[RMDB]
RNA sequence: GGGAACGACUCGAGUAGAGUCGAAAAUGAGCAGUCACAGGCUGGGCCCGUUGCCCUGGGCUCCUGUGAGUAAAACCCAGUCAAUUUUGAGUACCCAGUAAGGCAUCCAUUGAGUUAUUUUGCAGCCAGGAGUGCUAUUAAGAACAGUCGCGGCUGGAUACAGAGGGAAGUUCGCUUCCCUCUGUAUAAAAGAAACAACAACAACAAC
Reactivity to 2A3 in 0.01 (KOAc 150mM, MgCl2 10mM, bicine 150mM(pH8.5), 24C), signal-to-noise 2, nucleotides 027 to 156: u070g040a020g080c030a010g190u070c010a000c000a000g000g110c170u150g050g120g030c000c010c030g000u060u140g050c040c030c020u040g010g020g020c020u050c030c010u080g010u030g030a050g020u120a000a100a110a040c000c040c020a000g020u020c020a110a100u040u110u120u180g040a060g010u050a050c010c010c000a000g000u030a030a140g060g020c000a040u000c000c000a060u030u090g000a050g060u040u050a090u110u200u170u110g050c010a010g060c030c000a010g000g070a080g040u070g000c020u030a010u080u190a090a050g020a050a020c020a010g060u070c010g020c100g130g000c010u050g040g010
Reactivity to DMS in 0.01 (KOAc 150mM, MgCl2 10mM, bicine 150mM(pH8.5), 24C), signal-to-noise 2, nucleotides 027 to 156: u010g010a070g000c050a080g000u000c030a000c030a070g030g010c300u010g000g040g020c030c010c120g050u020u000g010c090c070c000u050g010g040g020c050u000c040c020u000g030u010g000a120g020u010a020a060a050a090c010c000c000a150g000u000c070a060a150u020u000u010u000g030a140g010u000a070c000c030c020a220g050u000a110a110g000g030c000a100u000c030c010a130u000u000g000a190g010u000u010a060u010u010u010u020g000c050a070g020c040c010a060g010g020a110g030u000g000c010u000a060u000u000a140a130g000a050a070c030a060g000u000c010g020c070g030g020c000u010g040g000

Source: RMDB library OK3TST, as collected in RNAgym. This 207-nucleotide RNA was probed chemically with 2A3 and DMS. DMS adducts were read by reverse transcription with MarathonRT. The reactions ran in a buffer of 150 mM KOAc, 10 mM MgCl2 and 150 mM bicine (pH 8.5), at 24 C. The 2A3 profile rests on 560 reads. 2A3 adducts were read by reverse transcription with SuperScript II with manganese.